[RMDB]
RNA sequence: GGGAACGACUCGAGUAGAGUCGAAAAGCAGCGAUCAAGGGCGGGACCUGGUUCGAGACGGGCGCGGAGAUGCUGAACGGCGGCACGCUGAACUACUUUGCGGUCCCCUGGGGCAUCAUCAACAACCGAUCACCAUGUUGUUCGCAACAUGGUGAUCAAAAGAAACAACAACAACAAC
Reactivity to 2A3 in 0.01 (KOAc 150mM, MgCl2 10mM, bicine 150mM(pH8.5), 24C), signal-to-noise 1, nucleotides 027 to 126: g030c030a000g030c030g040a040u060c020a110a090g070g020g040c090g050g000g000a080c000c010u040g030g050u050u030c090g030a020g030a130c060g020g000g060c100g000c070g060g000a060g010a010u090g050c010u050g000a110a050c030g240g060c010g020g000c120a050c170g020c010u030g010a100a020c020u080a030c010u160u140u080g050c040g000g010u040c050c000c000c010u000g060g000g010g040c030a040u010c020a020u080c010a040a020c000a010a040c030c040
Reactivity to DMS in 0.01 (KOAc 150mM, MgCl2 10mM, bicine 150mM(pH8.5), 24C), signal-to-noise 2, nucleotides 027 to 126: g020c000a050g010c060g000a070u000c140a060a120g020g020g010c060g010g010g010a080c030c050u000g000g030u010u010c080g000a110g010a130c110g000g000g030c070g040c060g040g020a050g000a080u000g010c030u010g000a130a110c110g000g000c090g000g010c080a150c040g000c020u020g000a110a120c090u050a110c140u000u010u000g000c070g000g000u010c000c010c000c100u000g020g010g010g000c020a080u000c020a060u000c110a110a050c190a100a100c080c080